[RMDB]
The data come from the RNA Mapping Database (RMDB), library RNAMAK.
This 207-nucleotide RNA was probed chemically with DMS.
RNA sequence: GGGAACGACUCGAGUAGAGUCGAAAAGCGUACUACGUUGGGAGAUUCGUCAAGCACUAAGCAUCUUUGCACAAGGGAGAUACUCCCAAAUAGGAGUAUCUUUGAUCUUGUGCAAAGAUGCUUAGUGCUUGACGAAGAUCAUCGAUCAACGUAUCGCGAUUGUUUUAAACUUCGGUUUAAAACAAUCAAAAGAAACAACAACAACAAC
Reactivity to DMS in 0.01 (KOAc 150mM, MgCl2 10mM, bicine 150mM(pH8.5), 24C), signal-to-noise 1, nucleotides 027 to 156: g020c010g000u000a130c110u000a000c000g020u000u000g020g000g000a300g000a180u000u000c010g020u010c000a010a020g030c010a010c000u020a010a010g000c010a010u000c000u000u000u000g000c000a020c000a020a030g010g000g000a020g030a010u000a020c010u000c010c010c050a000a070a160u000a010g020g010a050g000u010a000u000c000u000u000u000g000a050u040c000u000u000g010u000g000c010a010a010a000g000a000u010g000c000u000u000a000g000u000g020c000u000u000g000a000c000g010a010a000g000a100u010c100a140u000c050g000a300u000c010a010a020c000g010u000a020u000c040g010c130